RNA sequence: GGGAACGACUCGAGUAGAGUCGAAAACAAGGCGCAGAGCACCGCGUCCGACGGCAAUCUGAAACAGGCGCAGACGGUCAAGACGAUGGCAGAGGCGGCAGCAAUCCCGCAGGAUCAGCUAUUGAGCGCGAUCGCCGUCCUCCAGAAGUACGUGAGCGUACACUCGCAUUUUCGAAUGCGAGUGUACAAAAGAAACAACAACAACAAC
Reactivity to 2A3 in 0.01 (KOAc 150mM, MgCl2 10mM, bicine 150mM(pH8.5), 24C), signal-to-noise 1, nucleotides 027 to 156: c130a030a080g000g030c010g040c040a010g010a000g130c040a060c050c000g000c020g030u030c040c100g090a080c070g060g080c060a030a000u010c010u030g000a070a110a040c160a130g000g100c020g000c010a000g010a010c030g000g080u040c010a070a000g060a010c040g020a030u090g040g040c080a030g030a090g030g000c000g000g000c010a000g000c000a000a000u000c090c090c010g020c000a020g050g050a130u120c040a020g000c030u180a180u210u250g070a000g000c000g030c000g020a020u000c030g000c000c000g010u040c000c000u020c000c000a040g000a150a000g180u100a060c090g020u120g000a020g080c040